[RMDB]
Source: RMDB library M2PK50, as collected in RNAgym.
Chemical mapping of a 177-nucleotide RNA with 2A3 and DMS.
For DMS the reverse transcriptase was MarathonRT.
Conditions: 150 mM KOAc, 10 mM MgCl2 and 150 mM bicine (pH 8.5), 24 C.

RNA sequence: GGGAACGACUCGAGUAGAGUCGAAAAAGCCAAUCCUUCGGGAUUGGCUACAGCAACGAAGCAAAGCAACGAGACAAGACGAGCAAAAGAUCGAGCAUGCUACACACCCCAUCUUCGGAUGGGGUAACUUGAUAAACUACUUCGGUAGUUUAUCAAGAAAAGAAACAACAACAACAAC
Reactivity to 2A3 in 0.01 (KOAc 150mM, MgCl2 10mM, bicine 150mM(pH8.5), 24C), signal-to-noise 5, nucleotides 027 to 126: a000g010c000c000a000a000u000c000c010u030u070c260g060g000g000a000u010u000g000g000c010u000a000c010a000g040c010a050a080c060g100a080a010g010c020a090a040a030g020c020a050a110c040g030a010g030a080c030a080a020g060a070c060g050a020g050c030a020a070a070a040g060a050u070c020g010a000g030c030a030u070g010c020u120a050c060a000c000a010c060c000c010c000a000u000c010u020u040c160g120g000a000u000g000g000g000g010u010a000a000
Reactivity to DMS in 0.01 (KOAc 150mM, MgCl2 10mM, bicine 150mM(pH8.5), 24C), signal-to-noise 5, nucleotides 027 to 126: a040g020c010c000a000a020u000c000c000u000u020c220g050g010g010a000u000u000g010g010c010u000a000c070a040g010c060a040a070c100g010a110a080g020c030a050a070a070g010c030a060a040c080g000a070g010a100c070a050a070g010a090c110g010a070g020c080a050a060a060a070g000a070u000c070g010a100g020c030a060u010g000c030u000a070c130a100c150a070c010c000c000c010a010u000c000u000u000c160g020g000a000u000g010g000g000g010u000a010a020